[RMDB]
RNA sequence: GGGAACGACUCGAGUAGAGUCGAAAAGGGCCCUGCGACCACAGCAGGGAUUGGGAUGAAUUGCCUGUCCUGGAUCUGCUCUAGAGGCCCAAGCUGCCUGCCUGAGGAAGGAUGACUUGACAAGUCAAUGCAAGCAGUUAUUCGUAACUGCUUGCAUAAAAGAAACAACAACAACAAC
Reactivity to DMS in 0.01 (KOAc 150mM, MgCl2 10mM, bicine 150mM(pH8.5), 24C), signal-to-noise 3, nucleotides 027 to 126: g010g000g010c010c010c020u020g000c040g010a140c050c140a130c140a120g010c010a050g000g000g000a020u000u010g020g000g000a120u000g000a080a130u000u010g000c030c020u000g000u000c020c040u000g030g010a130u000c050u000g000c020u000c040u000a070g020a130g020g000c020c020c030a060a110g020c080u000g010c050c010u000g000c040c030u000g000a110g010g000a110a050g000g010a170u000g010a020c030u000u000g010a080c190a100a150g000u020c030a080
Reactivity to 2A3 in 0.01 (KOAc 150mM, MgCl2 10mM, bicine 150mM(pH8.5), 24C), signal-to-noise 2, nucleotides 027 to 126: g030g000g000c000c040c000u010g060c060g100a090c000c100a030c050a120g020c010a000g020g000g000a000u040u100g040g000g020a040u080g120a080a170u120u150g060c000c010u040g030u050c020c010u000g010g020a070u030c010u030g020c020u000c010u040a090g030a090g110g020c000c000c000a000a010g070c050u070g000c000c000u070g020c000c020u060g030a030g110g030a070a000g060g020a020u100g010a000c010u040u060g000a050c020a110a000g050u010c000a000
Structure probing data (DMS and 2A3) for a 177-nucleotide construct. Source: RMDB library OK2TRN, as collected in RNAgym.